An RNA of 177 nucleotides, treated with DMS and 2A3 and read out base by base. Source: RMDB library RFM100, as collected in RNAgym. 2A3 adducts were read by reverse transcription with SuperScript II with manganese. The DMS profile rests on 1,579 reads. The 2A3 profile rests on 1,547 reads. The RNA was probed in 150 mM KOAc, 10 mM MgCl2 and 150 mM bicine (pH 8.5) at 24 C.
RNA sequence: GGGAACGACUCGAGUAGAGUCGAAAAGCCCAUGAAAUUGAUGAACUGAGAGUUGCUUCCAGUCCUGAGCGCACCAUCUGGAAUUCCAGUCUGAGGUUACAAUUAGAACUCCUGACCCCAGAUUCAACCUCUACGAACCUUUCGAGGUUCGUAGAGGAAAAGAAACAACAACAACAAC
Reactivity to DMS in 0.01 (KOAc 150mM, MgCl2 10mM, bicine 150mM(pH8.5), 24C), signal-to-noise 2, nucleotides 027 to 126: g000c010c000c000a210u040g020a050a130a060u020u020g000a110u000g000a040a110c130u000g000a130g000a080g010u020u000g000c080u020u000c090c000a060g030u060c030c020u000g000a120g000c100g030c030a080c070c050a030u000c000u010g000g000a080a040u010u020c080c010a120g010u020c010u070g000a050g050g000u020u040a060c110a020a080u010u020a070g000a090a120c000u050c000c030u000g070a070c060c050c000c020a110g020a070u020u020c160a060a120
Reactivity to 2A3 in 0.01 (KOAc 150mM, MgCl2 10mM, bicine 150mM(pH8.5), 24C), signal-to-noise 3, nucleotides 027 to 126: g110c000c000c000a010u080g080a020a060a010u180u090g020a050u020g030a100a040c050u000g000a030g040a010g150u130u140g030c000u070u020c020c000a020g040u010c000c000u040g070a050g000c040g000c010a010c040c000a020u050c010u010g050g050a110a110u160u020c000c000a030g030u000c030u050g020a050g040g030u090u040a060c020a080a040u110u050a090g030a060a070c020u000c010c010u040g090a080c000c000c000c000a040g010a050u080u040c030a060a020